The record gives the reactivity of an RNA of 177 nucleotides to 2A3 and DMS.
The 2A3 profile rests on 2,577 reads.
For 2A3 the reverse transcriptase was SuperScript II with manganese.
For DMS the reverse transcriptase was MarathonRT.
Conditions: 150 mM KOAc, 10 mM MgCl2 and 150 mM bicine (pH 8.5), 24 C.
RNA sequence: GGGAACGACUCGAGUAGAGUCGAAAAGAUAGCUAUCAUCUGAGAUGUACCAGCAUGUCAAAUAGCAUUCGUGCCAUACUAUGAUAUGAUCAGAUGCAUCACGUGAUGAGUCACGGCACUGUAACAAGCCAGUUACGAGGUUCGCUUCGUGACUGGCAAAAGAAACAACAACAACAAC
Reactivity to 2A3 in 0.01 (KOAc 150mM, MgCl2 10mM, bicine 150mM(pH8.5), 24C), signal-to-noise 4, nucleotides 027 to 126: g010a040u290a060g010c040u090a020u150c030a010u040c090u080g050a060g010a170u030g020u070a080c040c070a010g000c000a010u010g020u010c020a000a000a140u090a010g000c030a020u110u210c150g070u030g000c000c010a070u100a230c070u070a060u100g020a050u010a020u070g020a050u130c040a080g090a120u090g000c000a020u030c030a010c050g050u040g020a010u010g040a020g050u100c030a000c040g010g000c000a000c030u060g020u060a090a020c070a100a010
Reactivity to DMS in 0.01 (KOAc 150mM, MgCl2 10mM, bicine 150mM(pH8.5), 24C), signal-to-noise 2, nucleotides 027 to 126: g000a070u000a140g000c030u010a070u000c010a040u000c000u040g000a070g030a050u000g020u020a140c250c090a170g030c020a000u000g010u000c000a000a300a260u080a300g000c000a160u070u300c120g000u020g020c000c080a120u000a190c300u030a190u000g000a010u010a020u000g000a080u030c060a060g000a050u020g000c000a000u000c020a120c070g000u030g050a020u010g000a010g000u060c120a060c130g000g020c020a060c040u050g010u020a040a100c130a050a060
Overview
For DMS, 1,918 sequencing reads were counted.